Chemical mapping of a 177-nucleotide RNA with DMS and 2A3. For DMS the reverse transcriptase was MarathonRT. Conditions: 150 mM KOAc, 10 mM MgCl2 and 150 mM bicine (pH 8.5), 24 C. As a SHAPE reagent, 2A3 marks flexible, mostly unpaired nucleotides at the ribose 2'-OH.
RNA sequence: GGGAACGACUCGAGUAGAGUCGAAAAGGAUGCUACGUAGUAAUAUUGACAACUACCUCAUGUGCAGUUACACAUUGUCAAUCGAUAUGCGUUCGUAACUGCACAACGCGUAUCGACAUCCAUAUCGCUACUACAUUGAAUUCGUUCAGUGUAGUAGAAAAGAAACAACAACAACAAC
Reactivity to DMS in 0.01 (KOAc 150mM, MgCl2 10mM, bicine 150mM(pH8.5), 24C), signal-to-noise 9, nucleotides 027 to 126: g010g010a020u000g010c040u000a040c070g010u000a080g010u000a070a080u010a160u000u000g010a050c090a070a070c130u000a090c090c120u000c110a090u000g010u000g000c010a020g000u000u000a020c020a110c110a080u000u000g020u000c030a060a070u000c110g000a050u000a030u000g010c090g010u000u000c170g010u000a010a020c030u000g000c050a020c030a010a010c080g010c030g010u000a010u000c020g020a180c050a020u000c000c000a090u000a070u000c100g010
Reactivity to 2A3 in 0.01 (KOAc 150mM, MgCl2 10mM, bicine 150mM(pH8.5), 24C), signal-to-noise 9, nucleotides 027 to 126: g010g000a010u010g000c010u020a020c020g030u020a020g030u020a080a120u080a090u120u140g060a030c030a080a020c060u090a050c000c020u080c020a050u060g000u000g000c000a000g000u000u010a010c020a000c010a030u040u080g030u030c020a050a150u100c060g010a000u010a010u070g040c030g030u020u060c020g000u010a010a000c000u010g000c000a000c000a000a000c000g000c000g000u010a010u050c030g020a040c020a010u000c000c000a010u030a010u030c060g000